[RMDB]
This 177-nucleotide RNA was probed chemically with 2A3.
Conditions: 150 mM KOAc, 10 mM MgCl2 and 150 mM bicine (pH 8.5), 24 C.
For 2A3, 243 sequencing reads were counted.
RNA sequence: GGGAACGACUCGAGUAGAGUCGAAAAGGAGUUAAAGGCAUCACCCCAUGAAUCUGAGGUGGUACGGAUUUCAGGUGAAGUAUUCGUAUACGGGAUAUUAAAUUAUGGAGAGGAGGGUGAUUCCGUCGCUGGGUAUCACCUUCGGGUGAUACCCAGCAAAAGAAACAACAACAACAAC
Reactivity to 2A3 in 0.01 (KOAc 150mM, MgCl2 10mM, bicine 150mM(pH8.5), 24C), signal-to-noise 1, nucleotides 027 to 126: g110g000a090g160u260u210a210a090a000g000g100c000a040u020c000a000c000c000c000c020a000u130g210a170a080u000c060u060g000a070g300g000u010g080g040u090a000c010g020g020a040u160u070u070c000a040g140g140u000g300a300a010g070u110a030u000u040c080g000u100a100u000a040c000g000g000g140a140u010a030u110u000a170a070a300u300u300a230u300g110g000a070g000a010g000g130a040g040g020g000u000g000a000u000u000c000c000g060u060c000